[RMDB]
RNA sequence: GGGAACGACUCGAGUAGAGUCGAAAAGGAAUGUAAAAUAGUGCAGCUGCUUUGGAAAACAGGCUGGUAGUUACACAAAAGGCUAAACAGAAUUAUUAUGUAAUCCACUAAUUCUACUCCUAGGUAUAUACCCAAGAGAAAUGAAAACAUGUCCACAGCCAUUUAAUCCUUUCGAGGAUUAAAUGGCAAAAGAAACAACAACAACAAC
Reactivity to 2A3 in 0.01 (KOAc 150mM, MgCl2 10mM, bicine 150mM(pH8.5), 24C), signal-to-noise 1, nucleotides 027 to 156: g010g010a060a000u050g000u120a090a170a100a090u070a080g060u040g000c010a000g000c000u030g000c030u140u030u180g070g080a030a030a090a020c010a010g060g090c000u010g010g000u000a050g010u060u080a030c030a000c000a030a060a110a000g040g010c050u050a170a080a000c030a040g170a150a010u090u110a030u040u020a100u180g110u050a040a040u030c030c000a000c010u040a100a000u040u020c010u020a010c000u000c030c000u000a010g020g030u080a040u000a030u110a110c000c000c000a010a000g060a030g000a100a060a000u240g010a050a160a070a000c040a080u060g060u100c110c000a050c010a130
Source: RMDB library OK3TST, as collected in RNAgym.
This 207-nucleotide RNA was probed chemically with 2A3.
The RNA was probed in 150 mM KOAc, 10 mM MgCl2 and 150 mM bicine (pH 8.5) at 24 C.
2A3 adducts were read by reverse transcription with SuperScript II with manganese.